Structure probing data (2A3 and DMS) for a 177-nucleotide construct. 2A3 adducts were read by reverse transcription with SuperScript II with manganese. It was measured as part of the RMDB library M2PK90. For DMS, 2,393 sequencing reads were counted. Conditions: 150 mM KOAc, 10 mM MgCl2 and 150 mM bicine (pH 8.5), 24 C. In probing experiments dimethyl sulfate is read out at A N1 and C N3, which are open when not base-paired.

RNA sequence: GGGAACGACUCGAGUAGAGUCGAAAAAUGAACGUGGUGGGCGUAAGUUAGUAGAAGAUCUAAUGGUAGGCGGUGGGUUUUCGACUGUACUCGAAACCACCACCACCACCAAGUCGUUCCCACCGAAUUCUAACGCAGAAUUCGUUCUGCGUUAGAAAAAAGAAACAACAACAACAAC
Reactivity to 2A3 in 0.01 (KOAc 150mM, MgCl2 10mM, bicine 150mM(pH8.5), 24C), signal-to-noise 2, nucleotides 027 to 126: a000u070g020a050a010c040g020u040g040g130u060g020g080g030c040g040u110a050a060g040u020u020a000g020u000a010g050a200a030g030a070u030c010u060a070a040u050g010g060u060a150g020g010c020g030g000u010g010g050g010u040u000u000u050c010g000a010c030u170g090u180a060c040u020c010g020a000a000a010c000c010a030c010c020a000c000c000a010c000c000a000c000c010a020a010g000u000c000g010u000u020c000c010c010a000c010c030g040a010a080
Reactivity to DMS in 0.01 (KOAc 150mM, MgCl2 10mM, bicine 150mM(pH8.5), 24C), signal-to-noise 3, nucleotides 027 to 126: a060u000g000a160a080c050g030u000g000g020u000g000g020g010c040g000u010a060a140g010u000u010a020g010u000a120g010a100a090g000a100u010c020u010a020a090u000g010g020u010a060g020g020c050g020g030u000g000g000g000u010u010u010u000c010g010a020c090u010g010u000a050c210u000c010g000a020a020a050c040c010a050c010c020a040c020c020a040c010c010a200c070c040a040a050g020u000c000g000u000u000c000c000c000a070c130c090g000a090a110